[RMDB]
RNA sequence: GGGAACGACUCGAGUAGAGUCGAAAACGUAGCAAUAUUUAUGGUACUGCUACUAUUGGUGUAUGUAAGUACACUGAUAUUGAUGUUAAUUCAGCUUUGAAUAUAUGUUUUGACAUACGCGAUAAUUCCCUACUGUAUUCUUCGGAAUACAGUAGGGAAAAGAAACAACAACAACAAC
Reactivity to 2A3 in 0.01 (KOAc 150mM, MgCl2 10mM, bicine 150mM(pH8.5), 24C), signal-to-noise 2, nucleotides 027 to 126: c030g020u000a000g020c010a010a040u000a080u080u120u040a180u220g050g020u010a010c030u010g010c000u000a020c000u000a000u000u060g050g020u030g010u020a010u010g090u060a060a130g000u000a000c000a000c000u000g020a010u000a040u030u150g050a020u030g030u020u060a010a000u080u030c030a030g010c140u150u190u250g110a160a010u130a030u020a020u180g010u050u010u000u010g010a000c010a020u090a050c060g010c030g080a030u040a080a120u090u000